[RMDB]
RNA sequence: GGGAACGACUCGAGUAGAGUCGAAAAUGUAGUCCUAGCUACUUACUUGGGAGGCUGAGGCAGGAGGAUUGCUUGAGCUCAGGAGGUCGAGACUGCAGUGAGCCAUGAGUACACCACUGCACUCUAGUCUGGGUGACAGAGUGAGACCCUGUCUCAACCUCUCACGAAAUUUCGAUUUCGUGAGAGGAAAAGAAACAACAACAACAAC
Reactivity to 2A3 in 0.01 (KOAc 150mM, MgCl2 10mM, bicine 150mM(pH8.5), 24C), signal-to-noise 2, nucleotides 027 to 156: u180g030u040a020g030u020c020c030u040a030g040c000u030a040c010u120u070a010c010u110u080g020g050g000a050g020g040c040u030g000a000g000g010c010a000g000g000a100g030g030a030u000u010g030c010u010u030g000a010g010c010u000c020a020g050g060a030g080g110u110c040g000a010g000a030c140u040g000c000a000g000u000g010a040g040c050c030a130u180g060a050g100u070a030c020a010c060c000a000c000u000g000c010a010c010u010c000u020a080g060u000c010u010g010g000g010u030g030a050c010a040g130a010g030u010g000a020g030a010c000c000c010u000g000u000c000u000c000a010a010
Reactivity to DMS in 0.01 (KOAc 150mM, MgCl2 10mM, bicine 150mM(pH8.5), 24C), signal-to-noise 2, nucleotides 027 to 156: u000g010u000a050g020u000c070c070u000a090g000c000u000a060c070u000u000a100c040u000u020g020g000g020a050g030g020c060u000g010a030g010g020c020a080g000g010a110g050g000a210u000u020g000c010u010u010g000a300g010c000u000c010a040g020g000a110g050g000u000c120g000a110g000a020c050u010g000c030a160g010u010g010a110g040c020c090a220u000g030a150g030u000a070c060a050c000c010a100c020u000g020c020a020c010u000c020u000a090g000u000c030u000g020g040g050u000g000a240c060a160g010a120g010u000g000a140g000a120c030c000c040u000g000u000c000u000c000a060a130
An RNA of 207 nucleotides, treated with 2A3 and DMS and read out base by base. Reactivities are given for positions 27 through 156. Reactivities are rounded to 0.1 and cut off at 0 and 3. It was measured as part of the RMDB library OK3TST. The RNA was probed in 150 mM KOAc, 10 mM MgCl2 and 150 mM bicine (pH 8.5) at 24 C.